[RMDB]
RNA sequence: GGGAACGACUCGAGUAGAGUCGAAAAAGUUGCUGGCCGUCGGCGAGGUUAAGCUGGAAAGCGAGCCGGAGCGAAAGCGAGUCCGAAACGGGCGACCAUAGUCGGCGGCCGCAGACGCGAAGCCGGGAGUAUAUAACUAGUUCGCUAGUUAUAUACUAAAAGAAACAACAACAACAAC
Reactivity to 2A3 in 0.01 (KOAc 150mM, MgCl2 10mM, bicine 150mM(pH8.5), 24C), signal-to-noise 4, nucleotides 027 to 126: a000g070u050u020g020c100u160g020g000c010c000g000u000c000g010g010c010g030a110g010g000u040u030a120a050g000c010u020g070g090a220a060a010g030c020g010a020g020c020c010g060g020a010g000c010g010a020a010a000g010c010g020a050g020u000c010c010g040a190a170a130c160g000g010g000c000g000a000c010c020a080u100a100g000u010c010g000g010c000g010g010c000c000g000c000a000g000a000c030g020c040g060a050a010g060c050c010g030g040g030
Reactivity to DMS in 0.01 (KOAc 150mM, MgCl2 10mM, bicine 150mM(pH8.5), 24C), signal-to-noise 9, nucleotides 027 to 126: a110g010u010u010g010c030u030g040g010c000c000g030u000c000g010g010c000g010a140g010g000u000u000a050a170g010c010u010g000g040a110a120a060g020c020g000a150g010c030c020g020g020a150g010c020g010a140a120a070g010c010g000a080g020u000c010c010g010a060a120a110c170g010g010g000c010g010a070c170c090a090u020a210g010u000c000g000g000c000g000g000c010c000g000c010a010g000a050c050g000c090g010a090a120g010c020c010g000g000g010